[RMDB]
RNA sequence: GGGAACGACUCGAGUAGAGUCGAAAAUGAAGGGUACAGGUUCCUGGACCUGAGCAGGGAACAGUCGGCGGCAGAAGUCAUGAGGAUCCUCUCCACCGCCUUUAUCCUCUUGUCCUUGACCUCGGACACAUAAACUAGCAUUCGUGCUAGUUUAUGUAAAAGAAACAACAACAACAAC
Reactivity to DMS in 0.01 (KOAc 150mM, MgCl2 10mM, bicine 150mM(pH8.5), 24C), signal-to-noise 9, nucleotides 027 to 126: u010g000a100a080g010g000g020u010a060c110a060g010g010u000u000c060c050u000g010g010a100c050c060u000g000a100g020c100a150g010g000g010a040a110c120a050g010u010c060g010g010c050g020g010c160a030g010a060a070g010u000c060a120u000g010a130g010g010a070u010c050c050u000c030u000c020c040a060c030c020g000c050c010u000u010u000a060u000c020c010u000c060u010u000g000u000c000c000u000u010g010a090c060c030u000c090g010g000a230c130
Reactivity to 2A3 in 0.01 (KOAc 150mM, MgCl2 10mM, bicine 150mM(pH8.5), 24C), signal-to-noise 6, nucleotides 027 to 126: u100g030a040a030g050g000g000u070a050c060a050g040g060u110u090c030c010u070g030g050a050c010c040u020g020a020g040c090a020g000g010g010a050a030c010a020g060u040c030g020g010c010g020g010c050a010g020a110a010g040u070c040a090u150g080a030g180g030a050u050c000c020u020c010u000c010c000a030c000c010g010c010c000u020u030u010a030u020c000c000u020c000u040u050g010u010c010c000u050u090g080a080c000c020u020c020g020g020a020c020